[RMDB]
RNA sequence: GGGAACGACUCGAGUAGAGUCGAAAAGAUAUGGAGGUGAACUACGAGCGGGGAUUCGAAGAACUCGGAAACGAGGGAGAAUUGCACGCUCGCACCUCCUAAGUCAAAACUGUCGUUCGCGACAGAAUCCUUAAUCUAGGUUCGCCUAGAUUAAGGAAAAAGAAACAACAACAACAAC
Reactivity to 2A3 in 0.01 (KOAc 150mM, MgCl2 10mM, bicine 150mM(pH8.5), 24C), signal-to-noise 5, nucleotides 027 to 126: g020a010u070a040u160g000g010a000g010g030u030g030a140a100c130u160a060c300g010a000g020c020g000g010g030g010a010u020u010c030g110a300a050g010a060a030c010u010c000g020g010a060a060a040c010g000a000g000g000g020a040g020a010a010u020u210g190c120a030c110g000c000u000c000g000c000a000c000c000u000c000c000u000a010a000g000u000c000a000a010a120a170c010u010g000u010c010g010u090u120c300g000c010g150a000c000a000g030a020a110
Reactivity to DMS in 0.01 (KOAc 150mM, MgCl2 10mM, bicine 150mM(pH8.5), 24C), signal-to-noise 6, nucleotides 027 to 126: g000a030u010a300u000g000g000a000g010g020u000g000a110a100c130u020a290c030g000a010g010c000g010g010g010g000a010u000u000c010g020a090a120g010a100a220c000u000c010g000g010a090a090a160c020g010a030g010g000g000a070g010a030a010u000u000g010c040a110c000g010c010u000c010g010c000a010c000c010u000c000c010u000a010a030g000u000c020a080a100a120a140c010u000g000u000c000g000u000u010c250g010c000g000a010c010a010g000a090a100

Background:
The record gives the reactivity of an RNA of 177 nucleotides to 2A3 and DMS. High 2A3 reactivity points to a flexible backbone, as in loops and unpaired stretches. The DMS profile rests on 7,709 reads.